RNA sequence: GGGAACGACUCGAGUAGAGUCGAAAAUGAAGUCGCACAACGUACUGCUCACGCGCGAUGGGACGGCAAAGAUCGCCGAUGUGGGCCUGGCAAAGGUCCUCACACAGGGGUAUGUAAGCAAGCUGGAGCGCUCUACUAUGUUCGCAUAGUAGAGCGCAAAAGAAACAACAACAACAAC
Reactivity to DMS in 0.01 (KOAc 150mM, MgCl2 10mM, bicine 150mM(pH8.5), 24C), signal-to-noise 1, nucleotides 027 to 126: u040g040a070a160g040u000c070g050c000a050c060a060a090c080g020u000a010c080u000g040c040u000c080a080c090g010c130g010c110g020a060u020g040g010g000a130c040g000g010c010a090a120a050g010a210u000c040g000c040c010g000a050u000g020u000g000g000g010c010c000u000g000g030c180a020a090a070g040g040u000c000c010u000c050a040c090a060c050a050g000g000g000g040u000a040u010g010u010a050a070g000c110a040a090g020c070u000g000g000a300